[RMDB]
RNA sequence: GGGAACGACUCGAGUAGAGUCGAAAAUCUCCUCAAUUCUGAUACUAGCAAGAUCAAGAACCGAAUUGAGAGGCUGAAGAAAGAAUACAGCUCCACAUGGCACCAGGAUGCGAACCACCCCUACAGGAUAGCUAUGCCUAUUCGUAGGCAUAGCUAUAAAAGAAACAACAACAACAAC
Reactivity to 2A3 in 0.01 (KOAc 150mM, MgCl2 10mM, bicine 150mM(pH8.5), 24C), signal-to-noise 6, nucleotides 027 to 126: u010c000u010c020c000u010c010a000a020u020u010c020u040g040a040u040a190c020u040a040g080c080a160a030g030a130u120c050a070a050g070a200a080c070c030g020a020a010u010u030g000a020g030a050g050g000c050u050g040a040a030g100a100a220a040g090a010a050u080a080c010a000g010c010u030c020c020a090c010a100u100g020g000c010a040c040c000a020g080g020a080u100g030c020g000a030a010c000c000a050c000c000c010c010u010a020c020a040g060g080
Reactivity to DMS in 0.01 (KOAc 150mM, MgCl2 10mM, bicine 150mM(pH8.5), 24C), signal-to-noise 4, nucleotides 027 to 126: u010c030u000c040c010u000c030a040a030u000u010c000u010g010a050u020a100c060u030a120g000c120a120a110g010a050u000c050a070a100g010a120a140c230c140g010a030a030u000u000g000a030g000a080g020g010c050u000g000a070a090g010a060a070a050g000a140a060u010a100c050a050g000c010u010c050c050a050c140a090u000g000g010c010a030c010c030a050g000g000a070u010g000c050g010a080a090c060c020a050c020c020c010c060u000a030c190a040g020g000
Description
An RNA of 177 nucleotides, treated with 2A3 and DMS and read out base by base. Source: RMDB library OK1LIB, as collected in RNAgym. The RNA was probed in 150 mM KOAc, 10 mM MgCl2 and 150 mM bicine (pH 8.5) at 24 C.